RNA sequence: GGGAACGACUCGAGUAGAGUCGAAAAGAAGUCGUGUCUUAGCUGAAACGAUACAACGCACGAGAUUCCAAGGUCUCUGUAGAACGACCGCUUGUGACGUCAUAGCUAUCACGUUCGACAUACGACAGGUAUGAUGUAGGUUCGCCUACAUCAUACCAAAAGAAACAACAACAACAAC
Reactivity to 2A3 in 0.01 (KOAc 150mM, MgCl2 10mM, bicine 150mM(pH8.5), 24C), signal-to-noise 4, nucleotides 027 to 126: g150a090a010g000u020c020g000u020g010u020c040u080u050a010g010c000u000g020a070a040a020c030g000a010u030a050c030a010a000c010g000c000a020c030g020a000g020a060u150u100c110c010a040a020g010g000u000c000u010c040u050g140u100a050g050a090a020c030g000a020c000c000g010c000u000u000g000u010g030a160c010g010u010c020a050u050a040g000c010u010a020u030c040a000c040g030u040u010c000g020a020c010a030u210a020c020g050a020c030a020
Reactivity to DMS in 0.01 (KOAc 150mM, MgCl2 10mM, bicine 150mM(pH8.5), 24C), signal-to-noise 5, nucleotides 027 to 126: g010a130a080g000u000c000g010u030g000u010c080u000u000a030g020c000u000g000a110a050a040c030g010a100u000a050c090a030a010c050g000c020a040c050g000a050g000a090u020u000c150c210a100a050g000g000u000c010u000c050u020g020u020a060g000a090a110c130g020a080c110c010g000c010u000u000g020u000g000a080c020g000u010c100a250u020a090g020c010u000a010u010c130a020c060g010u020u010c030g000a050c050a050u010a110c100g000a070c130a050